An RNA of 207 nucleotides, treated with 2A3 and DMS and read out base by base.
[RMDB]
RNA sequence: GGGAACGACUCGAGUAGAGUCGAAAAGGACUGCGCAGUCCGGCAACAUCAGCAGAGAGCCCGCUAUACGUGACGGAUUGGCUGAAGCGUACAGAAAUAUUGAGCCUCCUGCAAGAGGCAGGCAAGCAAAACGUACGUGAGUUCGCUCACGUACGAAGAUUUCAUAAAAGUUCGCUUUUAUGAAAUCAAAAGAAACAACAACAACAAC
Reactivity to 2A3 in 0.01 (KOAc 150mM, MgCl2 10mM, bicine 150mM(pH8.5), 24C), signal-to-noise 4, nucleotides 027 to 156: g020g010a010c020u060g030c150g020c090a010g000u020c040c000g030g020c020a060a040c010a110u120c050a020g000c050a010g070a000g000a020g170c020c030c010g010c010u070a050u080a140c110g040u040g100a020c030g020g050a050u110u090g070g000c030u040g010a070a010g010c020g020u040a040c040a050g150a020a120a030u250a090u130u130g030a050g010c000c010u020c010c010u060g040c040a090a020g030a040g150g050c030a010g030g000c040a040a040g010c010a010a020a070a050c020g000u010a000c000g000u000g000a000g000u050u130c170g020c120u000c000a000c000g000u000a000c000g000a000a000
Reactivity to DMS in 0.01 (KOAc 150mM, MgCl2 10mM, bicine 150mM(pH8.5), 24C), signal-to-noise 2, nucleotides 027 to 156: g000g010a080c030u020g000c060g020c080a120g020u010c000c030g030g080c030a040a040c030a110u010c060a080g000c060a100g010a130g040a140g000c010c010c040g050c040u000a120u000a080c060g000u000g000a210c080g020g020a270u000u010g030g000c000u010g020a030a300g000c010g030u040a130c030a050g000a000a100a160u020a090u010u000g010a110g000c010c000u030c000c010u010g000c130a070a080g000a130g020g000c040a030g020g030c000a020a120g040c090a090a030a080a130c020g020u000a000c010g000u000g010a080g040u010u000c300g010c020u000c000a020c000g010u000a000c000g000a010a090
Values cover nucleotides 27 to 156. It was measured as part of the RMDB library M2RFPK. The reactions ran in a buffer of 150 mM KOAc, 10 mM MgCl2 and 150 mM bicine (pH 8.5), at 24 C. Values are in units of 0.01, from 0 to 300, in steps of 10.